[RMDB]
RNA sequence: GGGAACGACUCGAGUAGAGUCGAAAAUUGGGGUUGGGGUGUCCCCCCGCAUGCAGGGCACUGGGGUGUCCCCCUGUGUGCCCAGGGACAGGGUGCCCCAUGUGUGUUGGGGUCCGUCCCCCUCCGGCAAAGCUUGACAAUUCGUUGUCAAGCUUUGAAAAGAAACAACAACAACAAC
Reactivity to 2A3 in 0.01 (KOAc 150mM, MgCl2 10mM, bicine 150mM(pH8.5), 24C), signal-to-noise 1, nucleotides 027 to 126: u080u060g000g000g040g030u070u240g030g010g000g060u040g060u040c000c010c000c030c000c000g060c010a010u060g000c050a040g030g010g020c020a000c020u020g000g010g060g040u120g050u060c000c010c020c040c010u040g070u020g030u070g140c000c000c000a000g000g000g020a010c080a100g210g020g000u200g030c000c000c000c000a020u050g080u020g010u000g070u050u100g020g000g000g010u000c010c010g040u040c000c000c000c000c010u000c000c040g030g000
Reactivity to DMS in 0.01 (KOAc 150mM, MgCl2 10mM, bicine 150mM(pH8.5), 24C), signal-to-noise 3, nucleotides 027 to 126: u000u000g010g010g020g000u000u010g020g000g010g000u010g000u000c020c010c000c000c010c040g020c130a040u010g010c160a100g020g000g020c030a030c030u000g000g010g000g020u010g000u000c190c090c000c000c000u000g000u010g000u000g000c020c020c020a060g010g010g010a030c030a190g010g010g000u010g020c010c000c000c040a070u000g010u000g020u010g020u000u010g010g000g010g020u000c050c010g000u000c000c000c000c080c010u000c000c020g000g010

Source information
Source: RMDB library OK2TST, as collected in RNAgym. An RNA of 177 nucleotides, treated with 2A3 and DMS and read out base by base. Conditions: 150 mM KOAc, 10 mM MgCl2 and 150 mM bicine (pH 8.5), 24 C. For DMS, 8,018 sequencing reads were counted. Reactivities are given for positions 27 through 126. In probing experiments dimethyl sulfate is read out at A N1 and C N3, which are open when not base-paired. For 2A3, 2,172 sequencing reads were counted.